[RMDB]
RNA sequence: GGGAACGACUCGAGUAGAGUCGAAAAUUAAAGUCCCAACAUGUAAUGGCAUCUAAUAAUGACAAAAUGGGUACAUGUAAAUGUCAUAAAAUAAAGACACAAUAUAAGUGAAAGAUGCCAAAAAAAACAUUAGACCGUUAUUCGUAACGGUCUAAUGAAAAGAAACAACAACAACAAC
Reactivity to DMS in 0.01 (KOAc 150mM, MgCl2 10mM, bicine 150mM(pH8.5), 24C), signal-to-noise 1, nucleotides 027 to 126: u000u000a120a030a260g000u010c000c000c000a130a140c300a080u010g000u020a110a100u010g010g000c030a000u000c020u000a070a040u020a050a010u000g000a010c020a000a050a050a060u000g010g000g030u050a110c060a020u000g000u020a030a080a110u000g000u000c000a000u000a040a040a080a050u010a070a120a140g020a140c010a030c010a010a110u010a090u000a040a090g020u000g000a130a070a040g020a000u000g010c000c000a000a000a000a020a030a010a040a120
Chemical mapping of a 177-nucleotide RNA with DMS. Values cover nucleotides 27 to 126. For DMS the reverse transcriptase was MarathonRT. It was measured as part of the RMDB library M2PK90.